RNA sequence: GGGAACGACUCGAGUAGAGUCGAAAAGCGGCUAAGGCAGCAUCGGGUUACCACCGUAGACUUGAAAAUUAGGUGUUGGCCGUAUUACUAUCAUGUUUCUAGGCCCUCGUGGCGGACCCAGAACGCACUCUGACGACGACUUCGGUCGUCGUCAGAGAAAAGAAACAACAACAACAAC
Reactivity to 2A3 in 0.01 (KOAc 150mM, MgCl2 10mM, bicine 150mM(pH8.5), 24C), signal-to-noise 1, nucleotides 027 to 126: g040c040g000g000c090u120a070a070g130g000c000a000g070c000a010u150c040g000g000g060u010u100a150c040c070a030c000c000g010u000a050g100a090c000u140u060g140a000a040a120a140u300u140a170g060g030u110g000u120u030g050g050c010c040g000u010a080u040u100a060c030u030a090u210c060a180u200g130u110u000u000c060u060a090g000g000c000c000c000u000c040g000u060g030g000c040g060g000a010c000c000c050a030g100a140a000c000g000c090a060